[RMDB]
Record summary
Conditions: 150 mM KOAc, 10 mM MgCl2 and 150 mM bicine (pH 8.5), 24 C. The record gives the reactivity of an RNA of 207 nucleotides to 2A3. For 2A3 the reverse transcriptase was SuperScript II with manganese. Reactivities are given for positions 27 through 156.

RNA sequence: GGGAACGACUCGAGUAGAGUCGAAAAUAGCCGUUAUGCGCGAAGCGGUGUAGCGUCACUUUGAUGGCGGUACUAUGAAUUGAUGCAAGGUGUGGAGCGACCUUAAACAGUUCGGGUGGUGCUCUGAAAAACAAAUAGGCGUUCGCGCCUAUUUGAACGUAUAUGGCAGCUUCGGCUGCCAUAUACGAAAAGAAACAACAACAACAAC
Reactivity to 2A3 in 0.01 (KOAc 150mM, MgCl2 10mM, bicine 150mM(pH8.5), 24C), signal-to-noise 3, nucleotides 027 to 156: u090a000g010c010c000g070u070u060a090u200g090c100g010c020g040a020a010g050c020g060g000u010g000u060a050g080c010g020u040c020a040c070u120u180u260g170a280u090g040g000c050g000g050u020a040c040u010a030u160g050a070a040u100u060g070a040u070g050c010a070a010g050g000u040g030u060g010g040a030g020c010g040a010c000c000u040u060a100a120a010c050a060g000u050u030c020g010g000g000u050g010g040u060g010c020u050c020u060g030a070a050a000a000a000c000a000a000a000u000a010g000g000c050g020u070u100c190g010c010g000c040c000u000a000u010u000u000g000a020a000